[RMDB]
RNA sequence: GGGAACGACUCGAGUAGAGUCGAAAAAACGUUGCAUGAUCGUAAAACAUGCCCGCCUUACCGUGAGCCGCCUUUGAAAGAAAGGUUUACACGGACUCUGUUGCGUUACGCACGUACCUAACUUGUGAAAACGGCAUCUUGUUCGCAAGAUGCCGAAUCUUUGAAGAUCCUUCGGGAUCUUCAAAGAAAAAGAAACAACAACAACAAC
Reactivity to 2A3 in 0.01 (KOAc 150mM, MgCl2 10mM, bicine 150mM(pH8.5), 24C), signal-to-noise 1, nucleotides 027 to 156: a000a000c010g000u000u000g000c020a020u000g010a010u110c060g090u190a080a080a080a080c050a030u040g000c000c010c000g110c000c000u060u140a090c000c020g030u000g010a050g040c070c040g000c010c080u050u100u040g180a200a190a090g300a040a260a010g000g000u000u080u050a030c000a000c020g000g060a060c030u100c010u160g020u100u010g000c010g020u050u100a060c150g010c010a010c100g060u130a090c010c010u040a110a060c050u150u050g040u090g060a000a000a000a160c010g000g000c000a000u040c000u010u010g000u000u100c090g000c160a000a000g000a000u010g000c010c000g000a000a000

The record gives the reactivity of an RNA of 207 nucleotides to 2A3.
Values are in units of 0.01, from 0 to 300, in steps of 10.
The reactions ran in a buffer of 150 mM KOAc, 10 mM MgCl2 and 150 mM bicine (pH 8.5), at 24 C.
For 2A3, 447 sequencing reads were counted.
It was measured as part of the RMDB library M2RFOK.